[RMDB]
RNA sequence: GGGAACGACUCGAGUAGAGUCGAAAAUAUUUCACUGUGUGCAGAGGCACUUAAGCUAAAUUUUUUAACUUCUGCUUGCUCUUUUUCAUGAAGAACUUUCUUUGCACUGAUCUUAACUAUUGAAAAAUUUUCCUCAAACUACAAGUUCUUACAGAGGGGUAGAUCAAAUGUUCGCAUUUGAUCUACCAAAAGAAACAACAACAACAAC
Reactivity to 2A3 in 0.01 (KOAc 150mM, MgCl2 10mM, bicine 150mM(pH8.5), 24C), signal-to-noise 1, nucleotides 027 to 156: u040a040u080u280u190c000a000c010u120g000u000g020u090g130c040a000g080a010g090g000c040a000c010u030u080a090a000g020c070u020a110a140a300u130u080u000u180u130u250a000a060c030u040u000c000u000g020c050u070u030g020c000u080c020u180u120u120u250u100c080a030u170g080a080a070g000a000a000c000u060u090u050c010u210u170u100g070c190a000c070u050g040a030u090c040u080u080a110a060c060u000a060u150u220g020a120a150a020a050a050u090u070u170u060c020c020u000c090a000a120a200c020u220a110c020a010a010g000u010u000c000u000u130a040c040a000g010a010g020g050

Source: RMDB library OK3TST, as collected in RNAgym. Chemical mapping of a 207-nucleotide RNA with 2A3. The RNA was probed in 150 mM KOAc, 10 mM MgCl2 and 150 mM bicine (pH 8.5) at 24 C. For 2A3 the reverse transcriptase was SuperScript II with manganese.